[RMDB]
RNA sequence: GGGAACGACUCGAGUAGAGUCGAAAAGACGCCAUGCACGUUGCCGAACGUCGCGGCCAGCAGGUAUUUGCCGUGCUCACCGGCGCCCAGCGCCUCGAUGGUUUUCUCGAAGUCCUCCGGGCUGGUGGAUGUGAUGAAUGUUCGCAUUCAUCACAUCAAAAGAAACAACAACAACAAC
Reactivity to 2A3 in 0.01 (KOAc 150mM, MgCl2 10mM, bicine 150mM(pH8.5), 24C), signal-to-noise 9, nucleotides 027 to 126: g070a010c040g010c030c010a040u110g020c030a010c060g060u080u110g040c020c010g060a110a040c050g030u040c040g020c000g030g000c020c010a030g030c030a020g030g050u110a190u090u140u170g020c010c010g040u050g030c030u040c030a060c030c010g020g000c010g010c010c030c010a030g010c020g020c010c010u040c030g050a060u070g080g000u030u030u070u050c030u010c030g020a070a010g050u040c000c020u020c040c040g020g020g010c030u040g030g050u060g080
Reactivity to DMS in 0.01 (KOAc 150mM, MgCl2 10mM, bicine 150mM(pH8.5), 24C), signal-to-noise 5, nucleotides 027 to 126: g020a090c090g010c010c010a060u040g020c040a050c050g010u020u020g030c040c030g000a110a090c070g020u030c040g020c070g010g020c040c080a100g030c040a090g010g000u010a080u020u030u030g020c010c020g010u010g000c050u020c040a030c090c040g010g020c060g010c030c020c050a120g020c050g000c020c000u000c030g000a040u010g000g000u020u000u020u000c020u000c050g000a090a100g020u020c020c020u020c060c080g000g010g010c040u000g000g020u010g020